[RMDB]
RNA sequence: GGGAACGACUCGAGUAGAGUCGAAAAGAUAUGGAUGGUAUCGAUGAGCAUUCUGUCGGAAACGACAGAUGCGAGGCACCAUCCUAAGUCAAAGGCCGACAAAUACCUUCGGGUAUUUGUCGGCCAAGUACUGAUUUGAGUUCGCUCAAAUCAGUACAAAAGAAACAACAACAACAAC
Reactivity to 2A3 in 0.01 (KOAc 150mM, MgCl2 10mM, bicine 150mM(pH8.5), 24C), signal-to-noise 2, nucleotides 027 to 126: g020a030u040a050u160g010g000a010u020g020g000u040a050u160c080g090a300u280g180a070g050c000a010u260u200c100u010g000u010c000g000g050a060a010a080c020g010a000c000a000g000a000u000g000c000g010a020g000g000c000a000c010c000a020u000c000c000u000a120a020g060u000c010a110a110a100g030g020c080c020g000a010c000a070a000a000u000a000c010c030u070u130c300g110g030g040u000a000u000u010u010g000u000c040g000g020c030c020a000a010
Reactivity to DMS in 0.01 (KOAc 150mM, MgCl2 10mM, bicine 150mM(pH8.5), 24C), signal-to-noise 2, nucleotides 027 to 126: g010a030u000a300u010g010g000a000u010g010g020u010a020u000c030g010a130u010g010a260g000c010a020u000u010c000u000g010u000c010g000g010a100a070a170c010g010a010c010a010g010a010u000g010c000g000a150g000g010c110a010c000c000a010u000c000c010u000a020a090g000u000c030a070a120a150g010g020c010c010g000a000c000a000a010a020u000a010c000c000u010u020c200g040g030g030u000a000u000u000u000g000u000c000g010g020c010c000a000a000